Description
An RNA of 177 nucleotides, treated with 2A3 and DMS and read out base by base. As a SHAPE reagent, 2A3 marks flexible, mostly unpaired nucleotides at the ribose 2'-OH. Source: RMDB libraries RFM100 and RFMREP, as collected in RNAgym. For DMS the reverse transcriptase was MarathonRT. Reactivities are rounded to 0.1 and cut off at 0 and 3. Conditions: 150 mM KOAc, 10 mM MgCl2 and 150 mM bicine (pH 8.5), 24 C. Reactivities are given for positions 27 through 126.
RNA sequence: GGGAACGACUCGAGUAGAGUCGAAAAAGCGCGCAUACUACGGUAUGCGCGCAAUCAGAAAUCGGGAAUGAUGUUCUCCCCUGGGAUUCCAAAACCGCUGUUUCGCUGAUGACGUCUGCUUUUUUAAUUACCUACUACUCUUCGGAGUAGUAGGUAAAAAAGAAACAACAACAACAAC
Reactivity to 2A3 in 0.01 (KOAc 150mM, MgCl2 10mM, bicine 150mM(pH8.5), 24C), signal-to-noise 3, nucleotides 027 to 126: a000g000c000g060c000g000c010a030u020a010c020u040a020c200g120g000u000a000u000g020c010g010c000g000c000a000a000u040c000a000g130a040a080a010u040c010g060g020g060a020a070u070g040a090u060g090u060u020c020u050c010c000c000c030u010g050g050g050a170u080u140c050c000a070a020a020a050c030c040g040c030u020g060u070u070u080c030g000c000u020g010a020u020g060a070c010g040u040c030u040g050c090u100u060u040u030u000u140a100a180
Reactivity to DMS in 0.01 (KOAc 150mM, MgCl2 10mM, bicine 150mM(pH8.5), 24C), signal-to-noise 2, nucleotides 027 to 126: a070g050c050g050c070g040c030a030u010a000c030u000a090c170g030g040u000a000u000g010c050g040c020g080c010a030a000u000c080a110g000a030a100a070u000c040g010g030g010a130a100u010g000a030u030g000u000u000c030u000c010c040c050c030u000g030g020g020a170u000u000c010c030a060a030a110a170c060c050g020c060u000g000u010u020u010c020g000c000u020g020a090u000g020a060c100g010u000c040u010g010c030u000u010u010u020u010u000a040a140